[RMDB]
Notes
An RNA of 170 nucleotides, treated with DMS and 2A3 and read out base by base. For DMS, 57,869 sequencing reads were counted. The RNA was probed in 150 mM KOAc, 10 mM MgCl2 and 150 mM bicine (pH 8.5) at 24 C. DMS adducts were read by reverse transcription with MarathonRT. For 2A3, 46,781 sequencing reads were counted.
RNA sequence: GGGAACGACUCGAGUAGAGUCGAAAAUAUCCCGGAGUGCCGGGCAAGUCCCCCCAUGCCCGUUCCACGGCUCCCUUCCAGAAGGGCGGGGGUGGCCUGGAGCGUCGGGCCCCAGCAGUCCGUGGAAAAAGCUACUAGUUCGCUAGUAGCAAAAGAAACAACAACAACAAC
Reactivity to DMS in 0.01 (KOAc 150mM, MgCl2 10mM, bicine 150mM(pH8.5), 24C), signal-to-noise 9, nucleotides 027 to 129: u050a040u020c020c010c030g020g010a100g020u020g000c140c050g000g010g010c130a070a100g070u070c020c010c000c030c030c000a150u030g000c010c010c030g020u020u010c010c000a040c030g030g030c000u020c050c010c010u000u030c050c050a190g040a170a120g050g020g040c210g000g000g000g000g000u000g010g020c020c000u010g010g010a100g040c140g020u040c000g020g000g010c000c000c010c010a090g040c100a070g030u000c010c020g040u060g000g000a040a040a050a080a050
Reactivity to 2A3 in 0.01 (KOAc 150mM, MgCl2 10mM, bicine 150mM(pH8.5), 24C), signal-to-noise 9, nucleotides 027 to 129: u160a020u040c000c000c000g010g020a110g020u080g050c030c010g000g000g000c070a100a050g300u280c000c000c000c000c000c000a010u070g010c000c000c010g010u020u000c010c000a010c050g000g000c000u070c000c000c000u020u030c030c010a100g080a300a140g170g020g000c030g020g010g000g000g040u130g030g010c000c020u010g020g010a090g020c050g120u180c020g010g010g000c000c000c000c000a010g000c010a010g100u000c010c010g010u130g000g000a040a030a020a010a000